[RMDB]
RNA sequence: GGGAACGACUCGAGUAGAGUCGAAAAUGUAAGGGUUUGACAAGCCUAGAUAGGUACUUAACCUCUAAAUCGAUAAGCCGUCAGUGUCCGAUGGGGUACUGAUUGUGAUGACGAUAGUAAGUCAGCACGGUAACAGCAAAUUCGUUUGCUGUUACCGAAAAGAAACAACAACAACAAC
Reactivity to DMS in 0.01 (KOAc 150mM, MgCl2 10mM, bicine 150mM(pH8.5), 24C), signal-to-noise 5, nucleotides 027 to 126: u020g000u040a120a150g000g010g010u000u000u010g010a020c040a180a300g010c010c010u000a070g010a100u030a040g010g010u000a100c200u030u010a080a080c020c010u000c070u010a040a080a040u000c030g000a060u010a170a270g000c010c030g000u010c000a020g030u010g030u010c010c010g020a190u060g000g000g010g000u010a000c000u000g010a010u000u000g010u010g000a100u030g000a120c010g010a050u010a050g010u040a060a100g000u000c030a080g010c190a170
Reactivity to 2A3 in 0.01 (KOAc 150mM, MgCl2 10mM, bicine 150mM(pH8.5), 24C), signal-to-noise 8, nucleotides 027 to 126: u130g030u050a050a140g040g010g000u060u050u040g050a050c050a050a030g050c000c010u050a050g060a180u190a030g030g020u070a100c050u170u120a090a070c010c000u000c030u060a120a160a040u020c020g030a040u020a070a030g020c010c010g000u010c000a000g000u000g010u000c010c020g150a280u300g150g000g010g010u000a000c000u000g010a010u010u040g010u010g010a070u130g020a020c010g000a010u030a040g140u110a190a040g010u010c020a010g030c050a010